Structure probing data (DMS and 2A3) for a 177-nucleotide construct.
The RNA was probed in 150 mM KOAc, 10 mM MgCl2 and 150 mM bicine (pH 8.5) at 24 C.
2A3 adducts were read by reverse transcription with SuperScript II with manganese.
Values cover nucleotides 27 to 126.
Reactivities are rounded to 0.1 and cut off at 0 and 3.
RNA sequence: GGGAACGACUCGAGUAGAGUCGAAAAAGAAGAAUCUCCUACUGUAUAUAUUUCAAAUAGAGUAGAUGGAAAGACUAUACAUAAGGUUAUAUCAAAUGAGUGGAUGGAAGCAUAUGAGGCUAGAAUAAGGAGUAGUAAUCUUCGGAUUACUACUCCUAAAAGAAACAACAACAACAAC
Reactivity to DMS in 0.01 (KOAc 150mM, MgCl2 10mM, bicine 150mM(pH8.5), 24C), signal-to-noise 4, nucleotides 027 to 126: a090g020a140a090g010a090a080u010c050u010c010c000u010a120c150u010g010u000a010u000a010u020a100u010u020u010c040a030a080a120u020a100g010a170g040u020a050g020a110u020g010g000a020a020a050g000a120c220u000a030u000a040c040a040u020a140a040g000g020u000u030a020u010a080u010c070a050a040a080u020g000a060g000u000g000g000a050u010g000g000a040a040g020c070a050u000a040u020g000a090g020g000c020u000a040g020a070a050u050a130
Reactivity to 2A3 in 0.01 (KOAc 150mM, MgCl2 10mM, bicine 150mM(pH8.5), 24C), signal-to-noise 3, nucleotides 027 to 126: a010g090a020a000g020a020a110u010c010u000c030c000u020a020c040u020g060u040a020u000a020u010a030u050u070u100c070a120a200a060u220a060g120a070g150u140a050g070a250u110g060g000a000a030a020g030a020c090u010a010u030a060c020a040u120a070a000g000g020u020u080a060u000a000u120c060a040a090a080u130g040a040g030u110g010g000a020u040g010g020a060a000g010c040a000u080a090u230g070a060g070g000c020u010a010g060a110a050u150a130